[RMDB]
Structure probing data (2A3 and DMS) for a 177-nucleotide construct.
Conditions: 150 mM KOAc, 10 mM MgCl2 and 150 mM bicine (pH 8.5), 24 C.
It was measured as part of the RMDB library OK2TST.
For DMS the reverse transcriptase was MarathonRT.
For DMS, 1,690 sequencing reads were counted.
Reactivities are given for positions 27 through 126.
For 2A3 the reverse transcriptase was SuperScript II with manganese.
For 2A3, 1,418 sequencing reads were counted.

RNA sequence: GGGAACGACUCGAGUAGAGUCGAAAACAAAAUACGGACAUUAGCUUCACUUUCUCUAGACACAAUAACAUCGUACAAAACUGUCUUAAUGGAUGAUAUUAAUUCUAAAGUUGCUUUCCUGUCAUCAUCUUAUGGACGGAUUCGUCCGUCCAUAAGAAAAAGAAACAACAACAACAAC
Reactivity to 2A3 in 0.01 (KOAc 150mM, MgCl2 10mM, bicine 150mM(pH8.5), 24C), signal-to-noise 2, nucleotides 027 to 126: c030a000a060a000a040u180a070c050g030g000a010c040a090u080u030a010g040c030u060u050c020a040c070u080u140u030c040u000c000u010a050g040a050c000a010c010a080a010u060a120a020c000a060u090c040g080u080a040c060a030a140a020a030c060u060g060u060c000u060u080a090a050u080g080g010a000u010g030a020u030a010u090u080a040a000u140u010c030u100a080a060a100g000u020u000g040c000u010u040u040c040c030u080g060u000c000a060u020c000a000
Reactivity to DMS in 0.01 (KOAc 150mM, MgCl2 10mM, bicine 150mM(pH8.5), 24C), signal-to-noise 3, nucleotides 027 to 126: c060a090a110a030a120u000a100c080g000g020a060c110a070u020u000a050g010c060u000u000c060a040c050u020u000u010c050u010c070u000a030g030a070c080a020c060a040a070u000a040a070c080a050u000c010g030u000a100c170a030a070a070a110c120u000g000u000c040u000u010a050a070u020g000g000a040u010g010a060u010a110u000u010a060a050u010u000c030u000a050a040a090g010u020u000g010c080u000u000u020c050c010u040g010u000c090a090u010c070a160